Source: RMDB library M2PK50, as collected in RNAgym. An RNA of 177 nucleotides, treated with DMS and 2A3 and read out base by base. For DMS, 21,283 sequencing reads were counted. The 2A3 profile rests on 19,172 reads. Reactivities are rounded to 0.1 and cut off at 0 and 3. Reactivities are given for positions 27 through 126. 2A3 adducts were read by reverse transcription with SuperScript II with manganese. The reactions ran in a buffer of 150 mM KOAc, 10 mM MgCl2 and 150 mM bicine (pH 8.5), at 24 C.

RNA sequence: GGGAACGACUCGAGUAGAGUCGAAAAGAACGCCACUUCGGUGGCGUUCGAAGAUCUACCACUCGUAGAUCACUAUCGUGUGAGACAUCGAUAGAUGUCAAAUGGUCCGGAAGUUCGCUUCCGGAAACCUAUCUUAGCUAUUCGUAGCUAAGAUAGGAAAAGAAACAACAACAACAAC
Reactivity to DMS in 0.01 (KOAc 150mM, MgCl2 10mM, bicine 150mM(pH8.5), 24C), signal-to-noise 9, nucleotides 027 to 126: g000a000a000c000g010c000c000a010c000u000u010c190g040g020u000g000g010c000g010u000u000c000g000a090a090g010a020u000c000u000a010c010c180a160c300u010c110g010u000a000g000a020u000c010a160c110u000a060u000c130g010u000g010u000g010a300g000a050c010a010u000c000g000a130u010a090g010a030u000g000u000c010a050a070a080u010g000g000u000c000c000g000g000a010a010g000u000u010c240g010c000u000u000c000c000g010g000a010a020a050
Reactivity to 2A3 in 0.01 (KOAc 150mM, MgCl2 10mM, bicine 150mM(pH8.5), 24C), signal-to-noise 9, nucleotides 027 to 126: g000a000a000c000g010c000c000a010c020u040u080c210g100g000u010g000g010c000g000u000u000c000g010a000a000g000a000u000c000u000a010c010c100a150c170u180c080g000u010a000g000a010u020c010a010c030u190a180u160c160g060u130g040u040g200a140g010a050c010a010u020c010g060a040u100a300g020a020u030g040u020c010a050a060a080u140g080g020u000c000c000g000g000a010a000g010u050u140c200g020c120u000u000c000c000g000g000a010a000a000